RNA sequence: GGGAACGACUCGAGUAGAGUCGAAAACCUUCCUUGGUUGGCCAAUUAAUUCCAAUUAAGGAAGGAAUUGGUUGGUUGGCCGGUUAACCAAGGUUGGCCGGCCAAGGAACCGGAAUUCCGGCCGGCCCAGCUAUCACCUAUUCGUAGGUGAUAGCUGAAAAGAAACAACAACAACAAC
Reactivity to 2A3 in 0.01 (KOAc 150mM, MgCl2 10mM, bicine 150mM(pH8.5), 24C), signal-to-noise 2, nucleotides 027 to 126: c000c000u020u040c000c000u010u010g030g000u010u090g030g020c010c000a030a030u050u100a050a080u120u000c010c010a020a060u130u080a220a190g110g020a030a080g030g010a000a040u020u000g000g000u010u000g010g010u010u010g000g000c030c000g010g020u090u080a010a000c000c010a050a020g040g000u010u010g010g000c010c020g000g000c010c010a050a050g020g010a010a020c030c020g070g090a060a080u170u000c020c000g010g020c020c000g010g000c010c000
Reactivity to DMS in 0.01 (KOAc 150mM, MgCl2 10mM, bicine 150mM(pH8.5), 24C), signal-to-noise 3, nucleotides 027 to 126: c010c000u010u010c000c000u000u000g000g010u000u000g000g010c230c090a030a050u010u000a130a080u010u010c010c010a070a100u000u000a100a090g000g000a110a120g000g000a010a010u000u000g000g020u000u000g000g010u000u000g020g010c000c000g020g020u010u010a030a020c010c010a040a050g000g010u010u000g010g000c000c000g020g010c010c010a030a050g020g000a040a060c050c050g000g000a070a260u000u000c010c020g000g020c010c010g000g010c040c030